This 177-nucleotide RNA was probed chemically with 2A3 and DMS.
[RMDB]
RNA sequence: GGGAACGACUCGAGUAGAGUCGAAAAUGUAUUUAUUGAGUUUUUGCGGGUCCAGCCAGAUACGCAUGGCGUACUCGGAACCAAAGAGCUGUACGCUACCAACGCCCGCGGUACGGCUUAGCGGGUCUAUAUCCUACCUCUUCGGAGGUAGGAUAUAAAAAGAAACAACAACAACAAC
Reactivity to 2A3 in 0.01 (KOAc 150mM, MgCl2 10mM, bicine 150mM(pH8.5), 24C), signal-to-noise 2, nucleotides 027 to 126: u060g000u040a160u090u200u090a200u100u190g090a160g060u090u040u040u170u120g140c040g010g000g010u050c040c010a010g040c020c010a060g040a060u140a130c030g060c210a110u040g070g000c010g000u020a010c000u010c010g020g020a050a050c010c000a000a060a020g000a010g000c040u010g030u010a010c020g000c050u090a060c030c030a110a010c060g060c010c070c020g040c010g000g010u030a030c020g000g000c020u000u010a030g000c020g010g020g000u000c000
Reactivity to DMS in 0.01 (KOAc 150mM, MgCl2 10mM, bicine 150mM(pH8.5), 24C), signal-to-noise 4, nucleotides 027 to 126: u000g010u000a060u000u010u010a070u010u000g010a130g000u000u000u000u000u000g020c040g010g000g020u000c090c070a140g030c050c030a050g000a130u000a080c160g030c130a150u000g010g000c010g020u010a030c050u000c030g010g000a040a090c040c010a050a300a140g010a040g010c010u010g000u000a010c020g000c100u010a130c100c070a090a110c250g000c060c030c020g030c030g010g010u000a020c050g010g010c020u000u010a070g010c220g010g000g010u000c120

Description:
It was measured as part of the RMDB library OK2TST. Reactivities are given for positions 27 through 126.